[RMDB]
RNA sequence: GGGAACGACUCGAGUAGAGUCGAAAAAGCAAGGACAGCAUGCCGAGGUCCCAGGUCCUCGUAAAACCUUUGGGAAAAAGACAACUGCCAACGAAGAGCUGGCUCUCGCUGCUUAAUCUAAACAAUUAAGUGAGCGCGCUUAUCGGAUUUUGCGCCUCCUAGUAAUUUCGUUCGCGAAAUUACUAGGAAAAGAAACAACAACAACAAC
Reactivity to 2A3 in 0.01 (KOAc 150mM, MgCl2 10mM, bicine 150mM(pH8.5), 24C), signal-to-noise 3, nucleotides 027 to 156: a020g040c050a030a010g020g030a070c020a050g000c020a030u070g030c010c000g010a010g020g030u010c020c000c000a020g000g060u170c000c010u050c040g110u120a020a010a010a020c020c020u060u080u100g020g010g000a050a060a020a050a000g100a030c060a100a040c100u080g010c010c000a030a020c040g070a060a090g000a000g060c050u050g010g000c000u000c010u010c020g000c010u030g010c000u010u010a010a010u000c030u060a000a000a120c020a020a020u010u010a000a010g010u030g210a020g010c020g000c010g000c010u100u080a060u200c020g120g040a130u150u100u040u140g010c020g030c000c020u000

Description: This 207-nucleotide RNA was probed chemically with 2A3. For 2A3 the reverse transcriptase was SuperScript II with manganese. It was measured as part of the RMDB library ARCHII.